The record gives the reactivity of an RNA of 177 nucleotides to 2A3 and DMS. It was measured as part of the RMDB library RFMREP. Values are in units of 0.01, from 0 to 300, in steps of 10. The RNA was probed in 150 mM KOAc, 10 mM MgCl2 and 150 mM bicine (pH 8.5) at 24 C.
RNA sequence: GGGAACGACUCGAGUAGAGUCGAAAAACUAAGGCAAAGAGAAGAGUGGUGCAGAGAGAAAAAAGAGCAGUGGGAAUAGGAGCUGUACUCCUUGGGUUCUUGGGAGCAGCAGGAAGCACUAUGGGCGGAUAAAGUUUUGGUUCGCCAAAACUUUAUCAAAAGAAACAACAACAACAAC
Reactivity to 2A3 in 0.01 (KOAc 150mM, MgCl2 10mM, bicine 150mM(pH8.5), 24C), signal-to-noise 1, nucleotides 027 to 126: a000c030u080a060a050g100g000c050a070a020a030g060a060g030a120a020g070a010g070u080g000g000u130g000c050a010g010a010g010a000g010a070a110a000a000a030a020g020a020g000c060a020g000u030g020g010g000a090a020u070a110g100g000a020g000c020u010g050u050a100c000u080c000c000u020u030g070g020g040u140u070c030u070u030g010g000g010a040g070c000a000g000c000a000g030g000a000a010g030c010a000c020u030a120u090g010g010g050c010g020
Reactivity to DMS in 0.01 (KOAc 150mM, MgCl2 10mM, bicine 150mM(pH8.5), 24C), signal-to-noise 2, nucleotides 027 to 126: a090c050u000a080a120g010g000c050a060a080a070g010a080g020a080a080g000a070g030u000g000g010u010g010c050a050g010a090g000a160g000a010a040a020a070a070a100g000a040g010c060a020g030u010g010g010g010a060a080u000a080g020g000a050g020c060u010g000u010a210c040u000c010c010u010u000g000g000g020u000u000c040u010u010g000g010g010a040g010c020a050g000c030a070g000g020a070a050g010c040a060c100u010a060u010g010g020g020c110g010